Chemical mapping of a 207-nucleotide RNA with 2A3.
The 2A3 profile rests on 627 reads.
The RNA was probed in 150 mM KOAc, 10 mM MgCl2 and 150 mM bicine (pH 8.5) at 24 C.
The data come from the RNA Mapping Database (RMDB), library OK3TST.
Reactivities are given for positions 27 through 156.
RNA sequence: GGGAACGACUCGAGUAGAGUCGAAAAUCGAUAACAACGGCGUCGCCAUCCGACAGGAGGGGUUCCAUGGAGUCGCCCCCGACCCUUACUGCCGACAUCCUGGUUGGCUCUAACCCCUUCUUGCUCAAGCUGUAGCGCGUAAAGGCAAGCUGCGUAACUUACAAAUGCCGUUCGCGGCAUUUGUAAGAAAAGAAACAACAACAACAAC
Reactivity to 2A3 in 0.01 (KOAc 150mM, MgCl2 10mM, bicine 150mM(pH8.5), 24C), signal-to-noise 1, nucleotides 027 to 156: u100c020g030a010u090a140a100c040a050a000c050g050g000c020g050u060c010g010c000c000a000u160c210c010g030a070c050a030g000g000a000g010g070g000g000u030u000c140c070a070u140g020g000a120g000u000c000g010c010c000c000c070c100g040a020c000c010c010u040u150a160c030u050g030c000c000g000a030c010a090u060c040c040u010g180g000u000u050g010g000c010u000c000u090a040a010c000c000c000c000u000u050c000u000u090g030c050u050c050a030a150g010c040u110g120u300a020g020c040g000c040g100u090a020a000a080g000g050c010a010a090g000c010u040g030c010g050u070a080a060